[RMDB]
RNA sequence: GGGAACGACUCGAGUAGAGUCGAAAAUGACCGCUACGCCACCGGAACCGUACAGAUCGACACGUUCACGCCUGACCCGCUGCCGAUGCCCGUUGCAGGUCCCGAGGUCGGCGAGGCUUUGGUCUCGUGAAAUAGUUCGGUUCGCCGAACUAUUUCAAAAAGAAACAACAACAACAAC
Reactivity to DMS in 0.01 (KOAc 150mM, MgCl2 10mM, bicine 150mM(pH8.5), 24C), signal-to-noise 4, nucleotides 027 to 126: u040g000a140c020c000g000c070u020a090c070g030c030c010a070c040c040g000g000a100a080c050c020g000u010a060c070a090g010a090u030c030g000a080c100a100c090g010u000u000c030a110c080g010c050c000u020g000a110c070c030c030g000c040u020g010c020c050g010a050u010g020c020c030c020g010u020u020g030c060a100g020g000u020c030c010c020g000a060g000g000u010c050g010g000c010g020a130g000g000c010u000u020u050g030g010u000c000u000c040g010
Reactivity to 2A3 in 0.01 (KOAc 150mM, MgCl2 10mM, bicine 150mM(pH8.5), 24C), signal-to-noise 7, nucleotides 027 to 126: u080g030a020c000c020g000c040u040a030c040g020c010c010a020c010c010g050g040a040a050c010c020g040u070a040c030a040g060a090u080c020g050a040c020a010c090g070u080u090c050a020c100g020c000c010u050g030a110c010c000c000g020c040u030g000c010c000g040a040u100g050c020c020c010g030u040u080g010c050a030g010g050u050c000c000c020g040a080g030g060u060c030g010g010c010g010a030g000g000c000u120u050u150g100g000u000c010u000c040g070